Record summary
Structure probing data (2A3) for a 207-nucleotide construct. For 2A3, 688 sequencing reads were counted. It was measured as part of the RMDB library OK3TST.
RNA sequence: GGGAACGACUCGAGUAGAGUCGAAAAGUGUUCGAACGAACACACUCGUUCGUUCGAGAGAACUCUCGUGUUCACGUUCACGUUCACGAGAGUGUUCGUGUUCGAACUCGUGUGAUCACACGUGAACGUUCGUACACGUACGAUCGUUCGUACGUGUCGGAAGUAGCGCAUUCGUGCGCUACUUCCGAAAAGAAACAACAACAACAAC
Reactivity to 2A3 in 0.01 (KOAc 150mM, MgCl2 10mM, bicine 150mM(pH8.5), 24C), signal-to-noise 1, nucleotides 027 to 156: g080u040g010u060u010c040g060a050a000c020g000a000a000c040a000c000a050c050u030c050g020u060u040c020g020u060u070c000g020a020g010a000g000a130a070c000u000c000u000c000g050u000g060u060u100c030a040c120g050u040u070c080a020c080g020u090u060c030a000c000g030a000g000a000g000u000g000u030u010c020g000u080g010u090u060c010g020a070a000c010u000c000g140u110g030u070g100a100u140c070a050c030a000c090g030u030g070a090a000c020g000u050u060c030g000u000a000c010a000c040g000u000a000c000g000a000u240c080g040u050u070c000g000u050a010c000g000u000g020u000